[RMDB]
Source information:
An RNA of 177 nucleotides, treated with DMS and 2A3 and read out base by base. The 2A3 profile rests on 15,548 reads. Source: RMDB library OK2TRN, as collected in RNAgym. DMS adducts were read by reverse transcription with MarathonRT. The RNA was probed in 150 mM KOAc, 10 mM MgCl2 and 150 mM bicine (pH 8.5) at 24 C.
RNA sequence: GGGAACGACUCGAGUAGAGUCGAAAAAUCCCACCUGAGCGACCUGGCCUUCGGCAAGCGCAGCGUGCAGCAGUUGCAGGCCGAACCGCAGGCGCGGCUGCCCGCCGCCGGCGCCGAGCCGGCCGCAAUUAUCAGCUAAUUUCGAUUAGCUGAUAAUAAAAGAAACAACAACAACAAC
Reactivity to DMS in 0.01 (KOAc 150mM, MgCl2 10mM, bicine 150mM(pH8.5), 24C), signal-to-noise 7, nucleotides 027 to 126: a130u000c000c000c000a140c240c130u000g000a110g030c010g000a030c020c010u010g050g010c040c130u010u000c020g000g010c020a100a300g010c130g030c020a030g000c030g020u000g000c030a030g000c020a040g010u000u000g030c010a050g010g000c000c070g010a070a080c200c180g000c020a030g010g010c000g000c000g000g000c020u000g000c000c030c020g020c000c040g010c010c010g000g010c280g010c030c020g010a090g010c000c010g000g000c010c020g030c020a120
Reactivity to 2A3 in 0.01 (KOAc 150mM, MgCl2 10mM, bicine 150mM(pH8.5), 24C), signal-to-noise 6, nucleotides 027 to 126: a000u020c010c000c000a030c020c060u140g100a070g040c000g010a020c010c060u210g020g020c020c090u110u080c020g020g000c030a100a060g020c050g010c200a010g010c000g010u030g000c010a000g000c000a020g010u300u300g040c020a020g110g020c010c040g100a110a050c060c050g020c050a020g010g020c010g010c010g030g000c000u010g000c020c020c010g030c010c010g020c010c020g090g040c080g000c030c000g000a010g010c010c010g000g000c010c000g010c010a000